Source: RMDB library OK3TST, as collected in RNAgym. An RNA of 207 nucleotides, treated with 2A3 and read out base by base. The 2A3 profile rests on 451 reads. The RNA was probed in 150 mM KOAc, 10 mM MgCl2 and 150 mM bicine (pH 8.5) at 24 C. Values cover nucleotides 27 to 156.

RNA sequence: GGGAACGACUCGAGUAGAGUCGAAAAUGCUGGUGCAAGUCCUAAAGUCCAAAGACCAGAGAAUCUGAACUUGUCUCAUGAUACAAAUAUAAUCUACCAUGGUAUAUAGCCCAUGUACACUUGAAAAGGGUAGAAGAAAUGAAUUCUGGCUCCAGAAGACGUGAUACCUGUUCGCAGGUAUCACGUCAAAAGAAACAACAACAACAAC
Reactivity to 2A3 in 0.01 (KOAc 150mM, MgCl2 10mM, bicine 150mM(pH8.5), 24C), signal-to-noise 1, nucleotides 027 to 156: u090g010c020u010g040g020u070g020c010a000a050g030u030c010c000u090a110a030a000g060u030c030c030a220a000a000g040a050c020c000a000g000a020g000a050a080u120c150u090g040a080a050c000u130u050g040u010c020u020c040a110u100g110a030u100a100c020a000a080a010u070a010u030a100a060u000c000u020a040c030c020a050u040g000g010u000a000u000a000u110a090g040c020c000c000a010u030g010u020a000c120a080c030u100u140g070a090a140a020a020g120g010g030u030a000g030a060a000g070a070a060a020u060g010a020a000u000u010c020u020g050g000c040u000c040c020a050g000a200a040